[RMDB]
RNA sequence: GGGAACGACUCGAGUAGAGUCGAAAACGGCAAUUAGUCGAACACACCACCCCCUGGUUGCUGCUCUCAGGCACACCAAAUGAAAAAUUGGUGACAACCUCCACGGCGCCUGAUUUUGUAGCAUUUAACACUACGAGGUUCGCCUCGUAGAAAAGAAACAACAACAACAAC
Reactivity to 2A3 in 0.01 (KOAc 150mM, MgCl2 10mM, bicine 150mM(pH8.5), 24C), signal-to-noise 8, nucleotides 027 to 129: c010g010g020c050a100a300u220u030a220g000u000c000g080a190a000c100a000c020a020c090c020a050c000c000c000c000c000u030g130g010u060u050g000c000u000g010c020u010c000u000c010a010g010g010c000a000c000a000c040c000a010a010a020u260g110a040a030a040a040a060u010u010g000g000u020g020a040c070a030a060c000c000u110c080c080a130c150g030g010c030g000c000c000u000g010a010u090u130u100u140g010u000a000g000c000a000u070u080u100a090a030c050a000
Reactivity to DMS in 0.01 (KOAc 150mM, MgCl2 10mM, bicine 150mM(pH8.5), 24C), signal-to-noise 6, nucleotides 027 to 129: c000g040g000c030a150a180u060u020a050g040u000c020g000a170a110c120a110c180a070c010c000a220c060c000c000c000c040u040g030g030u030u050g010c030u000g030c000u050c080u050c020a030g000g000c040a300c040a000c000c020a010a000a000u080g060a100a040a060a110a120u050u020g010g050u030g020a000c140a070a150c060c020u020c140c080a080c120g000g080c130g000c020c000u020g020a010u000u000u000u000g020u000a040g040c050a000u020u030u030a070a020c220a140
About this RNA: The record gives the reactivity of an RNA of 170 nucleotides to 2A3 and DMS. As a SHAPE reagent, 2A3 marks flexible, mostly unpaired nucleotides at the ribose 2'-OH. The RNA was probed in 150 mM KOAc, 10 mM MgCl2 and 150 mM bicine (pH 8.5) at 24 C. For DMS, 21,034 sequencing reads were counted. For DMS the reverse transcriptase was MarathonRT.